An RNA of 177 nucleotides, treated with 2A3 and DMS and read out base by base. It was measured as part of the RMDB library OK1LIB. For 2A3, 1,584 sequencing reads were counted. For DMS, 1,080 sequencing reads were counted. DMS adducts were read by reverse transcription with MarathonRT.
RNA sequence: GGGAACGACUCGAGUAGAGUCGAAAAGCGGUGGGACUGCCGUGGAGACAGGGAUGACCGACGAGUCUUCGGUCCGCACCCCGAAGGCGCUGCCCGACGGCGUCAGCCAGGCCACCGUCGGGGUGCGGGAGAGGGACGCGUUCGCGCGUCCCUCUCCAAAAGAAACAACAACAACAAC
Reactivity to 2A3 in 0.01 (KOAc 150mM, MgCl2 10mM, bicine 150mM(pH8.5), 24C), signal-to-noise 2, nucleotides 027 to 126: g030c000g000g050u140g070g060g110a130c070u170g000c040c010g050u090g000g020a030g000a050c130a100g040g010g000a020u060g080a180c000c020g000a020c010g020a010g020u000c010u020u070c010g060g040u030c000c000g000c000a000c000c000c010c000g010a000a010g030g000c050g010c120u110g010c000c010c020g150a120c100g020g020c000g000u210c120a010g000c010c000a020g030g000c000c010a010c010c000g010u000c000g000g000g000g000u000g000c000g010
Reactivity to DMS in 0.01 (KOAc 150mM, MgCl2 10mM, bicine 150mM(pH8.5), 24C), signal-to-noise 1, nucleotides 027 to 126: g020c020g000g000u020g000g020g020a140c100u010g000c020c000g070u000g000g060a050g060a040c210a180g020g000g000a000u000g020a020c010c040g000a080c140g020a200g010u000c050u000u000c040g070g000u030c140c010g000c060a020c000c000c000c000g000a060a000g000g010c200g010c130u070g000c070c000c080g040a160c150g000g020c140g020u030c300a040g020c020c020a180g000g000c010c060a050c000c000g060u000c000g000g020g000g000u000g000c000g000